An RNA of 177 nucleotides, treated with 2A3 and DMS and read out base by base. Values cover nucleotides 27 to 126. For DMS the reverse transcriptase was MarathonRT. It was measured as part of the RMDB library TTRDES. The DMS profile rests on 1,312 reads.

RNA sequence: GGGAACGACUCGAGUAGAGUCGAAAAGAUAUGGAGAGCCCGUUACUCCCCACCGUCGCGAUCGGAAACGAUCGUCGACGAGGUAACGCUCCUCUCCUAAGUCAAAAGGUGAUCUUCGGAUCACCAACGAGUAUGUCAUCUUCGGAUGACAUACUCGAAAAGAAACAACAACAACAAC
Reactivity to 2A3 in 0.01 (KOAc 150mM, MgCl2 10mM, bicine 150mM(pH8.5), 24C), signal-to-noise 1, nucleotides 027 to 126: g010a040u080a040u140g050g000a030g010a000g060c130c120c120g010u000u020a040c030u100c070c010c010c000a030c010c000g030u000c000g010c000g010a010u000c010g000g000a040a080a090c020g000a000u000c030g030u060c030g000a000c000g000a020g000g000u000a020a000c020g070c030u120c040c050u000c000u000c000c000u040a160a040g070u020c050a050a010a000a200g040g000u000g000a000u000c010u060u210c300g140g000a010u020c000a000c010c000a000a010
Reactivity to DMS in 0.01 (KOAc 150mM, MgCl2 10mM, bicine 150mM(pH8.5), 24C), signal-to-noise 3, nucleotides 027 to 126: g000a060u020a300u010g000g000a020g020a020g010c300c300c000g030u010u000a020c020u020c040c040c020c020a300c130c010g000u000c010g000c010g010a010u010c010g000g000a130a110a210c000g000a000u000c020g000u010c020g020a000c000g010a030g030g000u000a010a000c000g020c130u000c140c000u000c020u000c000c000u030a090a210g000u000c080a120a030a160a110g000g010u000g010a020u000c000u000u010c190g040g010a020u000c000a010c000c010a060a050